[RMDB]
RNA sequence: GGGAACGACUCGAGUAGAGUCGAAAAUCGCAGCAGCUGCAACAAAUUCGCAGUCGUCUGGAUGGGACUGAUGUCGGCGAGACAGCCUUACGUCCCAGCCAGAAAGUGUUAAUGCAGGCCCAGCAGGCCGGCAACACUACUUCGGUAGUGUUGCCGGAAAAGAAACAACAACAACAAC
Reactivity to 2A3 in 0.01 (KOAc 150mM, MgCl2 10mM, bicine 150mM(pH8.5), 24C), signal-to-noise 1, nucleotides 027 to 126: u070c010g000c040a030g010c010a000g010c000u020g010c010a030a040c020a020a300a060u290u240c080g000c040a020g090u030c000g040u000c020u000g040g000a010u010g000g020g000a020c040u080g020a020u040g160u260c030g020g000c040g040a090g070a090c030a020g020c000c010u040u110a050c030g000u010c000c010c000a000g040c010c000a000g000a010a000a030g020u050g030u020u080a100a090u060g040c020a020g110g000c030c010c030a030g020c010a000g000g100
Reactivity to DMS in 0.01 (KOAc 150mM, MgCl2 10mM, bicine 150mM(pH8.5), 24C), signal-to-noise 2, nucleotides 027 to 126: u000c100g000c020a040g000c100a100g000c010u000g040c010a090a120c130a060a080a210u010u000c200g010c010a030g000u010c120g050u000c010u030g000g000a030u000g010g010g010a000c010u000g020a160u010g000u000c140g010g020c090g010a290g010a090c130a120g010c090c040u030u010a130c180g000u000c000c020c000a020g010c010c010a010g000a000a040a070g030u000g000u000u010a080a080u000g000c040a020g020g000c010c000c030a100g000c150a060g010g000